[RMDB]
RNA sequence: GGGAACGACUCGAGUAGAGUCGAAAAUUGAUGACCUGAAACCAAAACAGUAUGAGUCGCUAAAAGCAUCAAUCCGAAAGCACGGUGUCGAUACGGCGAUCCUCAUUGACGCGGAGAAUAAAGUCAUCGACGGACAUCACCGCUUACGCGCUGUACGCUAUAGGGGAACGUUCGCGUUCCCCUAUAGAAAAGAAACAACAACAACAAC
Reactivity to DMS in 0.01 (KOAc 150mM, MgCl2 10mM, bicine 150mM(pH8.5), 24C), signal-to-noise 2, nucleotides 027 to 156: u000u020g000a040u020g020a100c030c010u000g010a120a110a180c070c060a030a130a060a080c020a090g040u000a110u020g010a030g050u000c020g040c000u000a070a050a130a120g000c010a010u010c020a170a050u060c040c060g020a130a090a200g010c100a100c040g010g020u000g000u010c040g040a070u000a030c140g000g000c060g030a060u000c070c020u000c040a080u010u000g030a100c100g010c250g030g010a140g010a100a090u000a050a060a150g020u000c020a030u010c010g000a020c020g060g010a090c090a080u000c070a120c050c010g000c060u000u010a060c090g020c050g000c000u000g050u000a060c070g030
Reactivity to 2A3 in 0.01 (KOAc 150mM, MgCl2 10mM, bicine 150mM(pH8.5), 24C), signal-to-noise 2, nucleotides 027 to 156: u100u090g050a030u020g020a030c000c040u060g090a110a020a030c090c020a130a060a000a020c030a070g060u060a030u030g040a020g010u000c000g000c010u090a080a110a060a010g000c030a010u020c010a020a160u030c040c030g130a300a110a010g090c080a030c150g050g000u030g010u070c070g050a030u010a130c060g010g010c000g030a050u160c020c000u050c020a060u030u130g080a060c060g000c040g100g050a060g030a080a080u110a080a070a010g040u010c010a030u030c050g000a020c020g000g010a000c020a030u100c050a050c050c010g000c010u040u110a040c030g020c000g000c030u020g000u000a020c070g000